[RMDB]
RNA sequence: GGGAACGACUCGAGUAGAGUCGAAAAGUGAGUCCUUACGAGGACUCACAAUAACUUCAGCGGUAAUUCGACCGCAAAUAUUACCGCUGAUGCGGUCGAAAAAGCUGCUACGUACGCGUAGCAGCAAUCAUCAGUAUCCGUUCGCGGAUACUGAUGAAAAAGAAACAACAACAACAAC
Reactivity to DMS in 0.01 (KOAc 150mM, MgCl2 10mM, bicine 150mM(pH8.5), 24C), signal-to-noise 3, nucleotides 027 to 126: g000u010g010a020g000u000c000c000u000u000a060c150g030a020g030g010a000c000u010c010a010c000a060a040u050a060a110c040u020u000c060a000g010c010g060g000u010a060a030u010u020c050g010a050c100c060g020c070a050a060a050u020a030u020u010a110c020c030g030c070u020g000a070u020g010c050g000g000u010c040g010a020a080a150a090a080g000c010u000g000c010u000a020c000g000u010a180c220g020c000g020u000a000g040c000a020g000c010a020a020
Reactivity to 2A3 in 0.01 (KOAc 150mM, MgCl2 10mM, bicine 150mM(pH8.5), 24C), signal-to-noise 5, nucleotides 027 to 126: g000u010g000a010g000u010c010c010u030u050a070c260g100a020g000g000a000c000u000c000a000c000a000a010u040a010a010c020u070u050c020a010g010c010g050g010u100a050a090u060u030c050g070a070c080c060g040c040a020a010a000u130a010u030u080a060c000c000g020c030u020g000a010u040g020c030g020g060u070c070g060a070a020a000a040a000g010c000u000g000c000u000a000c000g000u020a010c200g000c010g090u000a000g000c000a000g000c000a000a010
Source: RMDB library OK1LIB, as collected in RNAgym. The record gives the reactivity of an RNA of 177 nucleotides to DMS and 2A3. Conditions: 150 mM KOAc, 10 mM MgCl2 and 150 mM bicine (pH 8.5), 24 C. The 2A3 profile rests on 9,344 reads. High DMS reactivity at an A or C suggests that its Watson-Crick edge is free.